[RMDB]
RNA sequence: GGGAACGACUCGAGUAGAGUCGAAAAGAUAUGGAGGUAUUCAUUGUGGAUCUGUGGACAUGCCUACUCGUCGGAAACGACGAAGAGGCAACAGCCACACGGAUCCACAAUGAAUACCUCCUAAGUCCAUAGACUAGUGGUUCGCCACUAGUCUAUGAAAAGAAACAACAACAACAAC
Reactivity to DMS in 0.01 (KOAc 150mM, MgCl2 10mM, bicine 150mM(pH8.5), 24C), signal-to-noise 4, nucleotides 027 to 126: g000a100u010a300u000g000g000a010g010g010u000a000u000u000c000a000u000u000g020u000g000g020a010u000c010u010g040u000g010g010a050c040a280u000g010c010c000u000a070c030u000c000g010u000c000g010g000a140a130a270c000g010a010c010g000a010a050g000a030g000g010c000a030a040c260a120g030c020c020a180c010a010c050g030g010a010u000c000c000a000c000a000a000u000g000a000a000u000a000c000c010u000c000c000u000a010a060g000u000c030